[RMDB]
RNA sequence: GGGAACGACUCGAGUAGAGUCGAAAAGGGUUUAGCAGCGAGACGACGAUACGUACCCUGUCAUUUAAGUCGUCGGGCUGAUAAUGAUCAGCGAGGUACGAGCUGAUGAUAUUGCUGCUUUACCCAAGGGUGGUUGGUUCUUCGGGGCCGACCACCCAAAAGAAACAACAACAACAAC
Reactivity to 2A3 in 0.01 (KOAc 150mM, MgCl2 10mM, bicine 150mM(pH8.5), 24C), signal-to-noise 7, nucleotides 027 to 126: g000g000g000u000u000u000a000g000c000a000g000c010g030a010g000a010c020g000a000c020g010a020u040a110c010g010u010a010c010c000c040u060g140u090c050a070u030u080u130a060a020g010u010c020g020u030c040g020g090g010c020u030g060a060u110a130a010u020g080a010u060c020a000g020c020g050a080g010g010u010a000c010g010a010g010c030u020g030a030u020g050a030u070a060u100u140g000c000u000g000c000u000u010u010a000c000c000c000a020a030
Reactivity to DMS in 0.01 (KOAc 150mM, MgCl2 10mM, bicine 150mM(pH8.5), 24C), signal-to-noise 8, nucleotides 027 to 126: g010g000g000u000u000u000a000g010c010a020g010c010g000a040g000a110c050g000a020c020g010a050u020a250c030g010u000a000c010c000c300u020g010u030c160a120u030u020u020a100a270g000u000c000g000u010c090g000g000g000c060u030g020a080u040a040a030u000g000a010u010c010a000g000c050g010a120g010g000u000a010c000g010a270g000c020u010g000a040u000g010a050u010a080u010u020g010c010u000g000c000u000u000u000a010c000c000c010a070a070